Source information:
This 207-nucleotide RNA was probed chemically with 2A3 and DMS. 2A3 adducts were read by reverse transcription with SuperScript II with manganese. The RNA was probed in 150 mM KOAc, 10 mM MgCl2 and 150 mM bicine (pH 8.5) at 24 C. DMS adducts were read by reverse transcription with MarathonRT.

[RMDB]
RNA sequence: GGGAACGACUCGAGUAGAGUCGAAAAGACAGCGCCCAACGCUUCACAACCUGAAAGAAGCGCCUGUUAUCAGGACGGUUGAUCCAUUUACCGGUGCAUACCUCUGCAAACACCGGGUUGCAGAACAUAGAGGGAAAUUUGUUCGCAAAUUUCCCAACUAUGACUACGUGUUCGCACGUAGUCAUAGAAAAGAAACAACAACAACAAC
Reactivity to 2A3 in 0.01 (KOAc 150mM, MgCl2 10mM, bicine 150mM(pH8.5), 24C), signal-to-noise 4, nucleotides 027 to 156: g160a030c050a050g050c020g050c040c000c000a030a030c040g030c010u000u020c050a060c010a120a010c000c010u010g020a040a010a010g010a000a000g010c000g030c010c010u120g040u180u200a220u300c010a000g000g000a010c030g000g000u010u030g010a080u060c050c070a080u070u120u190a090c020c030g020g030u140g020c020a060u070a190c030c070u060c060u120g030c060a090a070a030c040a030c040c000g000g000g040u020u030g040c040a010g020a120a060c050a040u170a070g110a220g000g000g000a000a000a000u000u010u010g030u050u080c150g000c140a000a010a000u000u010u000c000c000c000a000a000
Reactivity to DMS in 0.01 (KOAc 150mM, MgCl2 10mM, bicine 150mM(pH8.5), 24C), signal-to-noise 2, nucleotides 027 to 156: g000a110c070a070g020c030g010c050c020c020a090a100c000g000c040u000u050c020a140c070a110a110c060c050u000g000a120a130a270g000a050a020g000c000g040c010c070u020g010u010u000a170u020c050a040g010g020a120c050g000g000u000u000g030a220u000c070c060a190u010u000u000a070c010c050g000g040u000g000c040a170u000a040c030c030u000c060u000g020c040a190a130a030c030a030c040c020g000g030g020u000u000g010c030a110g000a130a150c090a120u000a100g000a170g040g000g010a020a030a040u000u000u000g000u000u010c300g000c030a050a010a030u000u010u000c000c000c000a000a000